Source: RMDB library RFM100, as collected in RNAgym.
The record gives the reactivity of an RNA of 177 nucleotides to DMS and 2A3.
The RNA was probed in 150 mM KOAc, 10 mM MgCl2 and 150 mM bicine (pH 8.5) at 24 C.
2A3 adducts were read by reverse transcription with SuperScript II with manganese.
RNA sequence: GGGAACGACUCGAGUAGAGUCGAAAAGGUACAGGCAGGCUGAGAACUCCCCUCUUUUAUGCCCGGCGGUAGCGCAGCGAUCCGCGCCUCCGCCCUCCCGUUUGGGGACCUCGGUACAGGCAGGCUGUAGUCCUCUCGGAUUCGUCCGAGAGGACUAAAAAGAAACAACAACAACAAC
Reactivity to DMS in 0.01 (KOAc 150mM, MgCl2 10mM, bicine 150mM(pH8.5), 24C), signal-to-noise 1, nucleotides 027 to 126: g040g020u000a030c040a090g000g000c040a040g030g020c040u000g010a040g000a110a130c160u000c000c020c040c020u000c100u010u000u010u010a040u020g000c060c080c010g000g000c000g030g040u000a150g000c010g000c000a210g010c110g010a100u030c240c130g000c020g000c000c030u000c020c030g000c000c020c000u010c000c030c060g030u020u000u000g000g000g020g030a080c120c000u000c090g040g000u010a080c180a060g000g050c030a160g000g000c010u040g000
Reactivity to 2A3 in 0.01 (KOAc 150mM, MgCl2 10mM, bicine 150mM(pH8.5), 24C), signal-to-noise 2, nucleotides 027 to 126: g040g010u060a020c000a000g000g030c010a000g000g020c000u010g010a000g030a100a040c030u010c000c010c050c000u020c030u140u110u020u030a140u140g050c020c010c000g000g020c000g010g020u010a000g000c010g000c080a070g010c020g150a140u060c070c080g000c000g000c000c010u020c000c060g000c000c000c000u010c000c000c020g050u060u050u120g000g000g000g000a010c000c000u020c000g020g000u080a070c000a010g030g000c000a010g050g020c020u000g020